RNA sequence: GGGAACGACUCGAGUAGAGUCGAAAAGAUAUGGAUGUACAGGCCACGGUAAUUCUCGGAAACGAGUGCCAGUGGACCUGACAUCCUAAGUCAAACGGAGCUUGCUGGUUCGCCAGCAAGCUCCGAAUCAUCUAUGGCUGUUCGCAGCCAUAGAUGAAAAAGAAACAACAACAACAAC
Reactivity to DMS in 0.01 (KOAc 150mM, MgCl2 10mM, bicine 150mM(pH8.5), 24C), signal-to-noise 1, nucleotides 027 to 126: g010a010u010a300u010g000g000a000u000g010u010a100c020a000g000g010c000c000a020c000g000g020u000a030a160u000u010c010u000c000g010g000a070a110a160c020g000a010g010u000g000c000c000a080g050u000g020g000a040c010c010u000g010a030c000a000u000c000c000u000a030a050g040u000c020a060a150a240c010g000g000a030g000c040u000u040g040c000u000g000g000u000u000c220g030c010c010a020g010c000a020a000g000c020u000c000c000g000a020a050
The record gives the reactivity of an RNA of 177 nucleotides to DMS. Conditions: 150 mM KOAc, 10 mM MgCl2 and 150 mM bicine (pH 8.5), 24 C. For DMS the reverse transcriptase was MarathonRT. Reactivities are rounded to 0.1 and cut off at 0 and 3. Source: RMDB library TTRDEL, as collected in RNAgym.